[RMDB]
RNA sequence: GGGAACGACUCGAGUAGAGUCGAAAAACAGACAUGCUCCCAUCUGUCCCAAUCGGGCCUCCGGGGAGGAGCGUGUGAAACCCCCGGGACAUUACAUGAACAGAGUCACAGCAGCGUGCUCAACAUGACCUAUAGUGCUGUUCGCAGCACUAUAGGUAAAAGAAACAACAACAACAAC
Reactivity to DMS in 0.01 (KOAc 150mM, MgCl2 10mM, bicine 150mM(pH8.5), 24C), signal-to-noise 3, nucleotides 027 to 126: a180c050a050g010a030c000a070u010g010c010u020c000c000c110a270u000c010u000g000u000c000c010c010a140a060u000c180g020g010g010c140c030u010c050c020g020g000g010g000a120g000g020a030g000c000g030u020g010u000g010a040a120a090c030c000c000c000c030g000g000g000a060c040a100u000u000a190c030a040u000g000a060a090c160a130g000a080g010u000c030a030c020a090g020c080a080g040c150g010u000g010c020u000c010a120a130c100a080u010g000
Reactivity to 2A3 in 0.01 (KOAc 150mM, MgCl2 10mM, bicine 150mM(pH8.5), 24C), signal-to-noise 3, nucleotides 027 to 126: a020c020a010g040a010c000a000u030g010c010u000c020c000c000a020u020c010u010g070u050c020c000c000a030a120u210c110g140g010g000c020c020u030c010c000g000g010g000g000a070g010g030a000g000c040g010u210g030u040g140a140a080a060c030c000c000c010c000g010g000g010a010c010a040u100u210a030c020a030u060g120a130a040c080a120g060a030g120u230c020a020c010a040g150c070a020g050c090g100u040g000c000u010c000a010a020c010a030u070g060
Conditions: 150 mM KOAc, 10 mM MgCl2 and 150 mM bicine (pH 8.5), 24 C. The record gives the reactivity of an RNA of 177 nucleotides to DMS and 2A3. For DMS, 2,366 sequencing reads were counted. Values cover nucleotides 27 to 126.